[RMDB]
RNA sequence: GGGAACGACUCGAGUAGAGUCGAAAAGUCUCCUCCCUUGUUCCCCUUCGUCCUCUCCUCGUCUCGGAUUGGCUCAUUCUCAGGUCGGGCGAGGGUCCUCAGUUCUCUCUAUUCUUUCUUUUUGAAACCGCCAGACUGUUCGCAGUCUGGAAAAGAAACAACAACAACAAC
Reactivity to 2A3 in 0.01 (KOAc 150mM, MgCl2 10mM, bicine 150mM(pH8.5), 24C), signal-to-noise 6, nucleotides 027 to 129: g050u010c030u010c030c000u020c000c000c000u010u050g040u040u020c020c000c000c000u030u060c020g040u030c000c010u030c000u020c000c010u010c040g090u020c040u020c060g060g030a040u030u050g020g010c010u010c050a110u140u000c040u000c030a020g000g050u050c000g020g010g000c010g010a040g000g000g030u030c000c000u050c000a040g000u090u010c010u000c000u000c000u030a080u080u020c000u040u030u000c000u020u070u030u020u040g080a110a080a030c000c030g010
Reactivity to DMS in 0.01 (KOAc 150mM, MgCl2 10mM, bicine 150mM(pH8.5), 24C), signal-to-noise 3, nucleotides 027 to 129: g040u020c000u050c000c050u060c040c050c030u000u000g040u070u030c010c040c020c100u060u000c070g000u050c050c000u030c050u040c000c000u000c000g000u040c010u030c000g000g050a080u040u040g000g080c050u030c030a160u030u030c050u020c040a000g020g030u030c040g050g000g040c060g050a000g060g050g000u050c000c000u000c030a130g030u040u020c020u010c030u050c000u010a080u040u060c070u000u000u000c040u000u000u000u000u000g060a110a100a100c100c110g030
This 170-nucleotide RNA was probed chemically with 2A3 and DMS.
Conditions: 150 mM KOAc, 10 mM MgCl2 and 150 mM bicine (pH 8.5), 24 C.
For 2A3 the reverse transcriptase was SuperScript II with manganese.
Values cover nucleotides 27 to 129.
DMS adducts were read by reverse transcription with MarathonRT.